[RMDB]
RNA sequence: GGGAACGACUCGAGUAGAGUCGAAAAUAAAACAGUGCGUGGUAGCACUACCAAGACCAUGUUUCGGCACAUGGUCAGCCGAGUACAGCUUCGCCUGUACUCAGCGAACAACAACAACAACAAAAAACAUCACGACAUACUUCGGUAUGUCGUGAUGAAAAGAAACAACAACAACAAC
Reactivity to 2A3 in 0.01 (KOAc 150mM, MgCl2 10mM, bicine 150mM(pH8.5), 24C), signal-to-noise 1, nucleotides 027 to 126: u160a000a080a020a020c090a040g030u000g000c000g040u070g170g120u150a030g000c000a000c000u020a030c050c020a130a040g000a000c010c000a000u010g030u000u080u190c140g110g070c080a010c000a000u020g000g000u010c050a010g000c010c020g010a000g000u000a000c000a020g000c040u100u230c130g040c080c000u000g000u010a020c000u010c020a000g000c010g020a030a000c000a010a000c010a010a010c010a010a020c000a080a000c030a050a010a000a000a000a030
Reactivity to DMS in 0.01 (KOAc 150mM, MgCl2 10mM, bicine 150mM(pH8.5), 24C), signal-to-noise 1, nucleotides 027 to 126: u010a030a050a080a060c200a080g000u000g040c010g000u000g010g000u010a190g050c030a020c000u000a080c100c080a120a060g000a020c000c000a010u000g010u000u010u000c130g000g020c080a120c000a000u020g040g010u010c000a060g010c000c020g000a030g040u000a000c020a020g000c020u020u000c260g010c120c000u000g000u000a000c000u000c030a000g030c000g000a140a070c030a030a050c030a050a050c000a040a040c040a050a060c030a030a050a110a080a100a010